[RMDB]
RNA sequence: GGGAACGACUCGAGUAGAGUCGAAAACGCAUUGGCGCAGGCCACCGGCGAGGUUUCCGACAGGCCGUAGCCCUCGGUGAUGUGGCAGCCCGUCAUGUGCUGCCAGCGCUCCGCGACGGGGCGCUGAGCUCCACCUAUCAUUCGUGAUAGGUGGAGCAAAAGAAACAACAACAACAAC
Reactivity to DMS in 0.01 (KOAc 150mM, MgCl2 10mM, bicine 150mM(pH8.5), 24C), signal-to-noise 4, nucleotides 027 to 126: c080g010c020a060u000u000g000g000c020g010c130a160g000g000c000c000a030c060c060g000g000c020g010a060g020g000u000u000u000c050c030g020a130c180a120g010g020c110c080g010u000a140g000c070c010c010u000c000g000g000u010g000a100u000g020u000g020g010c010a070g010c090c120c040g010u000c100a030u010g020u000g010c020u000g000c070c000a010g010c000g000c010u000c000c010g020c260g000a120c140g020g000g000g010c010g010c000u000g010a150
Reactivity to 2A3 in 0.01 (KOAc 150mM, MgCl2 10mM, bicine 150mM(pH8.5), 24C), signal-to-noise 3, nucleotides 027 to 126: c030g000c010a020u030u140g030g000c020g030c110a050g240g000c010c010a010c010c030g110g080c010g000a090g000g060u040u080u070c040c000g040a060c040a120g140g100c010c020g000u030a040g040c010c010c030u050c030g300g150u070g030a200u140g010u030g040g000c000a010g020c000c040c030g010u060c040a100u160g010u050g040c030u050g030c010c000a000g000c020g000c000u010c000c000g080c090g190a220c200g020g000g000g010c000g030c010u000g000a010